[RMDB]
RNA sequence: GGGAACGACUCGAGUAGAGUCGAAAAUUUCGCUCAGACGAAAUUGAGCACCUUGUUGUAGAGGAGUUGGUCAAGAAGAGAGAGGAGUGUCUGGAUGCACUAGAGUCCAUCAUGACCACCAAGUCAGUACCCUCAUUAACUUCGGUUAAUGAGGGUAAAAAGAAACAACAACAACAAC
Reactivity to 2A3 in 0.01 (KOAc 150mM, MgCl2 10mM, bicine 150mM(pH8.5), 24C), signal-to-noise 2, nucleotides 027 to 126: u040u000u000c010g010c000u180c110a020g070a300c050g040a010a010a020u030u040g050a030g010c090a100c070c000u000u000g070u000u000g010u070a090g000a060g100g100a140g020u140u050g020g000u040c050a070a030g010a150a000g080a130g040a010g000a000g160g000a000g080u010g060u070c100u050g300g030a130u150g010c030a010c010u080a070g010a000g250u030c050c000a020u020c010a000u000g040a000c000c000a030c010c000a060a030g130u000c000a000g040
Reactivity to DMS in 0.01 (KOAc 150mM, MgCl2 10mM, bicine 150mM(pH8.5), 24C), signal-to-noise 3, nucleotides 027 to 126: u000u000u000c010g010c060u060c300a150g040a140c000g000a000a000a010u000u000g000a230g040c220a180c020c020u000u000g020u000u000g050u040a090g000a020g040g000a300g000u030u000g030g000u000c010a000a050g010a030a070g000a120g000a200g000a060g000g000a050g000u020g000u010c130u020g000g020a120u010g000c070a030c020u000a010g000a140g010u000c030c030a070u000c000a120u000g020a010c000c020a000c000c030a010a270g000u010c050a180g010
Chemical mapping of a 177-nucleotide RNA with 2A3 and DMS. The reactions ran in a buffer of 150 mM KOAc, 10 mM MgCl2 and 150 mM bicine (pH 8.5), at 24 C. For DMS, 3,923 sequencing reads were counted. 2A3 adducts were read by reverse transcription with SuperScript II with manganese.